[RMDB]
RNA sequence: GGGAACGACUCGAGUAGAGUCGAAAAGGCGGCUAGUUCGCUAGCCGCCAAAGUGCACAGUCGCCAGCCAAGUGCACAUAAUAAAAGAAAAGGUAGGCGACAAAAGAGGGGCGUUCGCGCCCCUCAAUCUAGGUACUUACUUCGGUAAGUACCUAGAAAAAGAAACAACAACAACAAC
Reactivity to DMS in 0.01 (KOAc 150mM, MgCl2 10mM, bicine 150mM(pH8.5), 24C), signal-to-noise 1, nucleotides 027 to 126: g010g020c000g010g010c000u000a010g020u000u000c180g020c000u010a030g000c000c000g000c000c000a010a030a060g010u000g000c000a000c010a100g000u000c010g000c000c000a240g020c020c010a110a060g000u000g000c000a040c000a050u010a130a090u030a050a160a130a190g020a070a010a190a110g010g000u000a100g000g010c000g010a000c000a110a020a050a120g000a000g050g000g010g000c020g050u050u010c190g020c010g000c000c000c000c050u000c000a030a030
Reactivity to 2A3 in 0.01 (KOAc 150mM, MgCl2 10mM, bicine 150mM(pH8.5), 24C), signal-to-noise 1, nucleotides 027 to 126: g000g000c010g020g060c000u000a000g040u040u030c070g000c140u000a000g000c010c010g030c000c000a010a000a000g000u000g010c000a000c010a020g000u010c000g000c030c000a070g060c070c000a220a010g010u010g010c030a000c000a000u150a110a000u000a000a050a020a010g140a000a150a040a010g010g020u070a070g030g000c000g000a000c010a000a060a000a010g000a010g000g040g000g020c010g020u070u060c210g030c020g000c130c000c000c000u010c000a000a000